[RMDB]
RNA sequence: GGGAACGACUCGAGUAGAGUCGAAAAGAUAUGGACACCGAACUACAGCGACCAGAACGAAGAACUCGGAAACGAGGGAGUUCUGCAAGCUGCGGUGUCCUAAGUCAAAGUCCACUUCGGUGGACAAGAGCUAUUCAAAGUUCGCUUUGAAUAGCUCAAAAGAAACAACAACAACAAC
Reactivity to DMS in 0.01 (KOAc 150mM, MgCl2 10mM, bicine 150mM(pH8.5), 24C), signal-to-noise 3, nucleotides 027 to 126: g000a050u000a300u010g030g010a000c000a000c000c010g010a080a040c080u020a300c010a000g000c020g000a300c300c010a010g000a010a010c000g000a060a150g020a130a120c000u000c000g000g000a100a100a210c000g000a000g020g020g000a060g000u000u000c010u000g000c000a050a200g000c000u000g000c000g000g020u000g000u000c000c000u000a000a100g010u010c090a080a070a160g000u000c000c000a000c000u000u030c150g000g010u000g000g000a000c000a010a060
Reactivity to 2A3 in 0.01 (KOAc 150mM, MgCl2 10mM, bicine 150mM(pH8.5), 24C), signal-to-noise 2, nucleotides 027 to 126: g010a020u060a030u100g010g000a010c020a000c000c000g020a100a050c120u190a060c290a000g030c010g000a010c050c000a000g010a010a000c010g150a300a090g020a060a030c030u010c010g040g000a110a030a010c010g000a010g000g000g000a040g010u000u020c000u010g000c020a030a020g010c010u020g020c010g010g000u000g000u020c000c000u010a010a020g000u000c000a050a110a040g000u030c000c010a000c020u070u100c300g050g000u010g010g000a000c000a000a010